[RMDB]
RNA sequence: GGGAACGACUCGAGUAGAGUCGAAAACGUCUCACCUGAAGAGGACAAAAGUCCGAAACAGUAUUAGUCUCAGUUCCUAGCUGACGGUUUGAGCCAAUCACGGUAAACAAAACCUUGCUUUCCUGUCGAAAUAAAUGAGCUUCGGCUCAUUUAUUUCAAAAGAAACAACAACAACAAC
Reactivity to 2A3 in 0.01 (KOAc 150mM, MgCl2 10mM, bicine 150mM(pH8.5), 24C), signal-to-noise 2, nucleotides 027 to 126: c050g040u000c010u010c030a060c040c030u000g030a100a020g000a060g060g010a000c000a050a300a070a000g010u020c010c000g000a030a060a000c000a000g080u040a110u080u170a030g010u040c030u010c080a010g000u040u010c010c000u010a050g050c010u050g060a030c070g050g000u000u000u070g030a030g030c010c010a060a080u150c030a040c220g000g000u080a050a060a050c080a010a140a050a040c000c000u030u050g010c010u100u060u090c030c010u080g100u180c080
Reactivity to DMS in 0.01 (KOAc 150mM, MgCl2 10mM, bicine 150mM(pH8.5), 24C), signal-to-noise 2, nucleotides 027 to 126: c240g000u010c020u000c040a160c210c010u000g030a070a040g020a300g030g030a020c000a070a120a170a210g000u010c000c000g000a190a190a060c020a010g000u000a100u020u020a090g000u000c030u010c040a100g000u010u010c030c020u000a100g010c010u000g000a080c140g010g030u000u000u020g000a170g000c040c030a110a040u000c080a050c180g020g020u010a080a050a110c150a020a030a070a040c030c020u000u000g000c070u000u000u010c020c010u000g020u010c180